Structure probing data (2A3 and DMS) for a 177-nucleotide construct.
[RMDB]
RNA sequence: GGGAACGACUCGAGUAGAGUCGAAAAGAAAGAAAAGAAAGAAAAUCAGAGCCCAAAUAAACCGAGAUAACCUAAUCUCAUCGGCGGAGAUGAAAAGGACGCAUACGUCCAAAGGGCUCUGAAAGAAAAUGACUACCCUAUUCGUAGGGUAGUCAUUAAAAGAAACAACAACAACAAC
Reactivity to 2A3 in 0.01 (KOAc 150mM, MgCl2 10mM, bicine 150mM(pH8.5), 24C), signal-to-noise 3, nucleotides 027 to 126: g010a040a070a000g100a110a070a030a020g140a040a120a000g100a070a120a030a030u010c000a000g000a000g000c000c010c000a020a080a010u100a030a010a020c030c040g000a000g020a050u080a090a080c020c020u020a130a030u050c060u020c070a150u050c010g070g000c070g070g060a100g010a050u150g050a060a090a030a050g000g000a000c010g020c100a040u160a270c040g010u000c000c000a050a030a000g000g000g000c000u000c000u010g000a000a000a000g010a000a030
Reactivity to DMS in 0.01 (KOAc 150mM, MgCl2 10mM, bicine 150mM(pH8.5), 24C), signal-to-noise 4, nucleotides 027 to 126: g010a130a070a120g020a090a050a110a170g010a120a120a150g030a070a090a220a070u010c020a000g000a000g000c000c010c000a060a080a070u010a050a140a090c060c050g010a080g000a080u010a080a120c110c100u020a070a040u020c050u010c050a100u030c060g000g010c100g000g000a060g000a030u010g000a060a080a080a120g020g000a020c030g010c290a100u070a090c110g020u000c000c010a010a090a090g000g000g000c000u000c000u000g010a000a030a050g000a050a060
The reactions ran in a buffer of 150 mM KOAc, 10 mM MgCl2 and 150 mM bicine (pH 8.5), at 24 C.
The data come from the RNA Mapping Database (RMDB), library OK1LIB.